[RMDB]
RNA sequence: GGGAACGACUCGAGUAGAGUCGAAAAGCUAUCAGUGAUGAGAAAGCUAACACGUAAGAAGAGGUACUCCUUUGUGGUGUAUUUCUUCUAUGAAAUAUAUUUGUUACGCUUGGCUUCUGAGAUAAAAGAGAAGCUAGACGUUCGCGUCUAGCUUCUCAAAAGAAACAACAACAACAAC
Reactivity to 2A3 in 0.01 (KOAc 150mM, MgCl2 10mM, bicine 150mM(pH8.5), 24C), signal-to-noise 2, nucleotides 027 to 126: g110c050u100a060u020c000a030g140u050g230a210u020g020a020g000a060a000a000g010c000u000a000a000c000a000c020g020u050a170a000g000a000a000g000a000g030g010u000a030c000u110c000c020u000u160u300g190u160g010g000u000g030u000a000u000u000u000c000u000u000c010u000a000u020g000a000a130a020u270a000u020a010u050u090u020g020u000u020a070c140g020c000u020u020g110g050c040u060u010c050u070g050a070g000a000u120a040a100a080a040